[RMDB]
RNA sequence: GGGAACGACUCGAGUAGAGUCGAAAAUGCAACGCUGGGCAAGCUUACCCACCAAGAGAUGGAAACAGCGUGCAAUGGGUGAUGCGCGAUAAAGUCGCCACUUUGGAGAUUUGGAGAGAAUGCCUAAGUAUGACAGGGCAUUCGUGCCCUGUCAUACAAAAGAAACAACAACAACAAC
Reactivity to DMS in 0.01 (KOAc 150mM, MgCl2 10mM, bicine 150mM(pH8.5), 24C), signal-to-noise 2, nucleotides 027 to 126: u030g000c070a060a100c060g010c060u000g000g000g000c040a060a120g000c070u000u000a130c040c000c020a080c040c050a060a100g020a090g000a120u000g000g000a110a120a070c020a080g010c010g020u000g000c070a050a080u030g010g000g000u000g020a100u000g010c040g010c010g000a030u010a060a060a060g000u000c140g000c020c040a050c060u020u010u010g000g010a110g000a140u000u020u020g000g000a250g000a080g000a040a070u000g000c030c000u020a050a110
Reactivity to 2A3 in 0.01 (KOAc 150mM, MgCl2 10mM, bicine 150mM(pH8.5), 24C), signal-to-noise 1, nucleotides 027 to 126: u100g020c000a010a070c050g030c000u080g040g060g000c000a040a010g000c030u010u050a090c030c010c000a000c000c000a130a000g120a020g000a120u090g050g000a040a070a010c000a010g010c000g010u020g000c000a000a090u090g000g090g000u120g020a040u070g000c030g030c000g040a010u130a160a190a000g050u000c040g020c060c000a010c020u150u080u040g090g010a120g000a150u170u130u100g030g010a040g000a020g000a080a020u050g020c010c010u050a130a020